Overview: This 207-nucleotide RNA was probed chemically with 2A3 and DMS. For 2A3, 1,801 sequencing reads were counted. The RNA was probed in 150 mM KOAc, 10 mM MgCl2 and 150 mM bicine (pH 8.5) at 24 C. It was measured as part of the RMDB library OK3TST. For DMS, 2,090 sequencing reads were counted.

[RMDB]
RNA sequence: GGGAACGACUCGAGUAGAGUCGAAAACAAAAUAGCUAUGGUGUAAUGGGAGCAGAGGAACUAUUAACAACAAUGUUAACUCCUGGUGAAUACACAGACCUUUCAAGUGAGGUAGGAGAAGUGAAUGGUUUUGAUAGGACUUUUGAAGAUAAAGUAGCUCGAUUACCUUUUUCGAAAGGUAAUCGAGAAAAGAAACAACAACAACAAC
Reactivity to 2A3 in 0.01 (KOAc 150mM, MgCl2 10mM, bicine 150mM(pH8.5), 24C), signal-to-noise 4, nucleotides 027 to 156: c010a000a050a030a100u090a020g030c050u080a060u150g020g030u060g030u070a070a130u080g010g030g000a030g020c060a030g020a040g050g010a020a020c050u060a080u120u070a020a010c040a010a030c030a040a150u150g010u040u040a060a030c000u020c020c000u010g030g020u060g040a080a020u110a060c070a010c000a070g070a080c000c000u050u190u140c100a130a030g030u040g120a010g010g040u010a020g040g020a010g020a060a020g040u050g060a030a060u050g010g060u070u060u050u000g020a050u040a010g070g000a000c000u110u110u050u100g120a070a020g020a060u210a090a070a030g150u230a040g050
Reactivity to DMS in 0.01 (KOAc 150mM, MgCl2 10mM, bicine 150mM(pH8.5), 24C), signal-to-noise 2, nucleotides 027 to 156: c070a060a080a100a090u020a080g030c020u000a070u010g010g030u010g040u010a110a120u010g040g000g070a060g030c040a060g000a080g000g000a060a100c050u000a110u000u000a110a070c080a040a160c110a080a100u000g000u000u000a110a100c100u000c020c020u000g000g070u000g000a070a150u000a170c100a060c040a160g000a060c010c030u000u000u000c030a100a270g020u010g020a040g020g040u000a040g030g010a050g000a010a110g000u020g020a040a090u010g020g020u000u000u000u000g000a120u020a050g020g000a120c040u000u000u000u000g010a040a060g010a120u010a050a040a070g030u000a110g020